Structure probing data (DMS and 2A3) for a 177-nucleotide construct. The reactions ran in a buffer of 150 mM KOAc, 10 mM MgCl2 and 150 mM bicine (pH 8.5), at 24 C.
RNA sequence: GGGAACGACUCGAGUAGAGUCGAAAAAUCUUACAACAGGCUAAUAAGUCUGUUGGUAUUAUAUCUAUGCCUUUGGGAUAUGUGUCUCAUGGUUUAGACUUAAUGCAAGCAGGGAGUGUCGUGCGUAGCUUCCUACUCAGUUCGCUGAGUAGGAAGCAAAAGAAACAACAACAACAAC
Reactivity to DMS in 0.01 (KOAc 150mM, MgCl2 10mM, bicine 150mM(pH8.5), 24C), signal-to-noise 1, nucleotides 027 to 126: a040u000c030u000u000a300c010a040a010c000a000g010g000c000u010a160a140u000a060a050g010u010c000u010g020u000u030g000g000u000a020u000u000a000u000a130u000c000u000a020u000g000c010c010u000u000u000g020g000g000a010u000a070u030g010u010g010u010c000u000c010a040u000g000g020u000u000u000a000g000a010c050u000u000a010a010u000g000c020a080a100g000c070a070g040g000g000a040g010u000g030u010c020g010u000g010c080g020u000a120
Reactivity to 2A3 in 0.01 (KOAc 150mM, MgCl2 10mM, bicine 150mM(pH8.5), 24C), signal-to-noise 1, nucleotides 027 to 126: a040u010c000u020u060a010c000a000a020c000a010g010g000c000u050a180a120u120a300a050g010u000c000u000g000u010u010g000g000u020a010u040u010a020u000a000u000c000u010a010u040g010c010c000u080u090u040g040g020g020a020u040a060u240g300u150g010u030c000u040c000a050u010g000g000u000u000u000a020g020a010c010u020u010a020a000u150g020c030a000a040g010c010a020g010g010g040a050g050u050g020u040c000g030u010g020c010g000u010a000